[RMDB]
Background: Conditions: 150 mM KOAc, 10 mM MgCl2 and 150 mM bicine (pH 8.5), 24 C. An RNA of 177 nucleotides, treated with DMS and 2A3 and read out base by base.
RNA sequence: GGGAACGACUCGAGUAGAGUCGAAAAUAUUCAUACUGAGUGUGGACCGUGCCGAAUUUAAGCAAAUGCUAGAUCCAAGCACACAGCGUUGGACUUUGAAGCCUCAAGGGCCAGAAGAUUGCACAGGUGAUGUCCAGUGAUUCGUCACUGGACAUCAAAAAGAAACAACAACAACAAC
Reactivity to DMS in 0.01 (KOAc 150mM, MgCl2 10mM, bicine 150mM(pH8.5), 24C), signal-to-noise 2, nucleotides 027 to 126: u010a100u000u000c030a110u000a070c050u010g000a120g010u000g000u010g000g000a070c070c080g010u000g000c010c070g020a080a060u000u000u000a150a110g000c060a080a100a100u000g000c020u010a060g000a040u010c010c030a050a090g000c030a020c140a090c160a110g020c070g020u000u000g010g010a110c020u000u010u010g000a090a210g010c060c090u010c110a050a030g000g000g000c060c030a140g010a040a050g000a110u000u000g010c010a060c140a110g020g000
Reactivity to 2A3 in 0.01 (KOAc 150mM, MgCl2 10mM, bicine 150mM(pH8.5), 24C), signal-to-noise 1, nucleotides 027 to 126: u090a020u040u070c030a010u120a100c070u110g070a000g050u000g000u030g030g040a040c060c000g040u080g030c050c040g140a140a050u100u240u080a140a070g060c030a090a090a190u170g010c040u040a040g030a040u000c020c020a000a000g000c000a000c010a010c000a070g020c040g200u070u030g000g000a000c000u040u020u050g020a040a010g070c030c010u000c040a020a020g070g000g040c010c000a020g000a090a000g000a080u080u160g000c000a040c000a090g000g010

For 2A3, 768 sequencing reads were counted.
For 2A3 the reverse transcriptase was SuperScript II with manganese.